[RMDB]
The record gives the reactivity of an RNA of 177 nucleotides to 2A3. 2A3 adducts were read by reverse transcription with SuperScript II with manganese. Source: RMDB library OK1LIB, as collected in RNAgym.

RNA sequence: GGGAACGACUCGAGUAGAGUCGAAAACAUGUGAAUGGCCAAAGUCUCACACAUUGUGGACAGAUGGAGUAGAAGAAAGUGAUCUUAUCAUACCCAAGUCUUUAGCUGGUCCACUCAGCCACCACAAGCCGGUCAUCAGGUUCGCCUGAUGACCGGCAAAAGAAACAACAACAACAAC
Reactivity to 2A3 in 0.01 (KOAc 150mM, MgCl2 10mM, bicine 150mM(pH8.5), 24C), signal-to-noise 1, nucleotides 027 to 126: c070a070u080g000u000g070a150a140u020g000g080c010c050a140a000a000g110u030c030u110c000a080c000a000c000a050u000u000g000u000g000g000a060c070a000g110a160u160g000g000a150g050u180a000g130a210a000g190a060a050a000g140u000g020a090u000c000u110u170a090u020c000a130u000a090c000c000c000a080a190g000u000c000u000u110u000a080g010c010u000g220g000u000c000c000a000c010u120c000a010g030c000c060a000c000c000a000c000a010a040